[RMDB]
RNA sequence: GGGAACGACUCGAGUAGAGUCGAAAAACACUAGUUGUAAGGCCCACGAAGGAUGCCCAGAAGGUACCCGCAGGUAACAAGAGACACUGUGGAUCUGAUCUGGGGCCAACUACCUCUAUCAGGUGAGCUUAUGCGCUAUGUUCGCAUAGCGCAUAAGAAAAGAAACAACAACAACAAC
Reactivity to DMS in 0.01 (KOAc 150mM, MgCl2 10mM, bicine 150mM(pH8.5), 24C), signal-to-noise 2, nucleotides 027 to 126: a050c070a070c040u010a130g040u010u000g010u000a120a120g000g000c030c000c010a080c210g030a080a260g040g000a030u010g030c000c000c040a010g060a060a300g000g010u010a050c080c000c020g000c000a010g010g000u000a000a030c030a100a060g000a140g000a180c300a010c000u000g010u020g000g000a020u010c020u000g010a100u010c030u000g000g000g000g000c020c010a030a110c140u000a070c020c010u000c060u070a090u010c160a050g020g000u010g000a100g030